Chemical mapping of a 177-nucleotide RNA with DMS and 2A3. 2A3 adducts were read by reverse transcription with SuperScript II with manganese. The reactions ran in a buffer of 150 mM KOAc, 10 mM MgCl2 and 150 mM bicine (pH 8.5), at 24 C.

RNA sequence: GGGAACGACUCGAGUAGAGUCGAAAAGUCUACCCGUUCGCGGGUAGACAAAAUUAAUUGAAAGAUUAAUAAGUAUGAAUUCGUAACAUACAAAACGAAAAAAAAGUAACACGUUCGCGUGUUACAACACCGAAUAUAACUUCGGUUAUAUUCGGUGAAAAGAAACAACAACAACAAC
Reactivity to DMS in 0.01 (KOAc 150mM, MgCl2 10mM, bicine 150mM(pH8.5), 24C), signal-to-noise 1, nucleotides 027 to 126: g010u000c000u000a020c000c000c000g000u000u010c230g060c000g000g020g020u010a010g000a030c020a000a060a090a040u000u000a010a040u000u000g000a190a110a160g030a020u000u000a000a000u020a140a140g010u000a030u010g020a050a130u000u010c110g010u000a120a100c020a030u010a020c070a140a070a100a110c200g000a000a000a040a030a060a140a150a070g000u000a000a010c000a000c000g010u000u000c190g020c000g000u000g000u010u000a010c000a040a090
Reactivity to 2A3 in 0.01 (KOAc 150mM, MgCl2 10mM, bicine 150mM(pH8.5), 24C), signal-to-noise 1, nucleotides 027 to 126: g000u000c010u000a000c000c010c020g000u020u020c290g010c020g050g020g000u000a000g010a000c000a000a000a000a000u010u000a000a000u000u000g040a030a100a050g040a010u000u040a070a040u160a230a000g010u030a030u060g050a090a120u090u100c070g030u060a060a000c000a020u100a010c020a020a130a000a050c070g160a090a040a020a000a000a000a010a050g020u000a000a000c000a000c000g010u020u030c160g010c000g030u000g000u000u000a010c000a000a000